[RMDB]
RNA sequence: GGGAACGACUCGAGUAGAGUCGAAAAGCGAUUUACAAGAAAGAAGAGAAAAAUUUGGAUCUAGCAAAGAAAUUGAUAUGGCAAUUGUGACAUUAAAAGUCUUUGCGGUAGCAGGACUUUUAAAUAUGACGGUGUCUACUGCUGCUGCAGCUGAAAACGGUCAUAAAUGGUUCGCCAUUUAUGACCGAAAAGAAACAACAACAACAAC
Reactivity to 2A3 in 0.01 (KOAc 150mM, MgCl2 10mM, bicine 150mM(pH8.5), 24C), signal-to-noise 2, nucleotides 027 to 156: g050c020g010a020u020u040u250a120c100a030a170g110a080a130a030g010a140a000g020a030g010a020a040a080a100a110u140u130u070g020g000a030u040c010u050a050g040c080a160a090a030g050a030a110a020u040u100g050a040u050a030u130g030g000c020a040a010u040u130g050u020g030a020c020a040u010u030a050a060a000a100g010u000c000u130u150u040g000c060g050g110u070a020g000c010a000g000g000a000c000u000u110u120u140a030a150a030u280a090u100g000a030c100g080g010u040g040u030c030u060a070c040u000g000c010u020g000c010u030g000c030a010g000c040u070g000a020a120a050a000
Chemical mapping of a 207-nucleotide RNA with 2A3. It was measured as part of the RMDB library OK3TST. Conditions: 150 mM KOAc, 10 mM MgCl2 and 150 mM bicine (pH 8.5), 24 C. Reactivities are given for positions 27 through 156.